The record gives the reactivity of an RNA of 207 nucleotides to DMS and 2A3.
It was measured as part of the RMDB library M2RFPK.
For DMS, 3,271 sequencing reads were counted.
RNA sequence: GGGAACGACUCGAGUAGAGUCGAAAAGAUGUUCGCUGAUUCGUCAGCCGCAUGCCCAGGUGGCCGCGAUCUUCAAGGCUACGGCGCGGAUAGGUCCGCGCUGAUCGUUUUCCUCCAACGAUGCUAUAAAAGGAACGAAGGUUCGCCUUCGUUCCAACACUAUUUCCCUCUUCGGAGGGAAAUAGUGAAAAGAAACAACAACAACAAC
Reactivity to DMS in 0.01 (KOAc 150mM, MgCl2 10mM, bicine 150mM(pH8.5), 24C), signal-to-noise 2, nucleotides 027 to 156: g000a050u000g000u000u000c120g030c000u000g010a070u000u000c220g020u000c010a000g030c010c040g010c040a010u020g000c000c020c030a110g040g020u000g010g020c000c040g000c050g020a040u000c010u020u020c050a020a300g010g010c020u000a020c000g000g010c000g040c010g020g010a140u010a140g030g010u000c010c010g010c000g010c000u010g000a020u000c020g000u000u000u120u000c030c040u000c050c110a060a100c110g000a090u000g000c060u010a130u010a060a060a170a160g030g000a040a010c010g010a020a020g030g020u010u010c300g010c010c000u000u000c000g030u000u000c000c000a000a040
Reactivity to 2A3 in 0.01 (KOAc 150mM, MgCl2 10mM, bicine 150mM(pH8.5), 24C), signal-to-noise 2, nucleotides 027 to 156: g040a020u070g010u180u200c090g000c010u020g010a070u030u080c290g080u040c120a000g000c010c030g010c010a030u050g010c000c020c020a020g000g010u010g010g030c000c010g050c090g080a030u030c000u010u020c010a010a010g010g040c010u000a010c000g010g000c030g030c000g000g010a050u130a190g130g210u030c000c000g000c000g000c000u010g000a010u000c000g030u100u060u100u080c060c050u160c030c000a130a110c090g040a070u070g030c040u090a030u080a250a090a060a070g010g000a000a000c010g000a010a010g010g010u010u070c200g070c000c000u000u000c000g010u000u000c000c000a000a000